[RMDB]
Structure probing data (2A3 and DMS) for a 177-nucleotide construct.
RNA sequence: GGGAACGACUCGAGUAGAGUCGAAAAGGGCAGUUUUAUUUGACGACGGAAAGGCUACCAACCGCCGUAGUUUUUUUAUUAUGGCGGAGUAUCCGAGGUAGCAGGAUACGUUCGUCGUUGCUGCCCAGGGCGCUCUGUUCUUCGGGACGGAGUGCCCAAAAGAAACAACAACAACAAC
Reactivity to 2A3 in 0.01 (KOAc 150mM, MgCl2 10mM, bicine 150mM(pH8.5), 24C), signal-to-noise 9, nucleotides 027 to 126: g000g000g000c010a010g010u050u080u130u130a220u090u200u230g020a000c000g000a000c000g020g050a080a030a030g130g000c000u000a000c000c000a040a030c000c000g000c000c010g000u000a000g000u000u020u020u010u030u100u100a040u020u000a000u010g000g000c000g010g020a020g050u080a100u100c100c070g030a060g000g010u000a000g000c010a020g110g090a060u090a100c020g040u060u110c010g000u000c010g000u010u030g000c000u000g000c010c000c000a000
Reactivity to DMS in 0.01 (KOAc 150mM, MgCl2 10mM, bicine 150mM(pH8.5), 24C), signal-to-noise 5, nucleotides 027 to 126: g010g000g000c000a030g000u010u020u030u010a050u030u030u030g020a000c010g000a020c020g000g000a090a200a130g000g000c010u000a010c010c010a140a140c010c000g000c000c010g010u000a000g000u000u000u040u050u030u050u020a000u020u000a000u010g010g010c000g000g000a120g000u030a060u060c240c190g000a130g010g000u000a000g000c000a050g000g010a140u020a100c010g000u010u020c000g030u020c000g000u010u000g010c000u000g020c000c000c010a020
For 2A3, 28,208 sequencing reads were counted. For DMS, 15,788 sequencing reads were counted. Conditions: 150 mM KOAc, 10 mM MgCl2 and 150 mM bicine (pH 8.5), 24 C. Values cover nucleotides 27 to 126. The data come from the RNA Mapping Database (RMDB), library OK1LIB.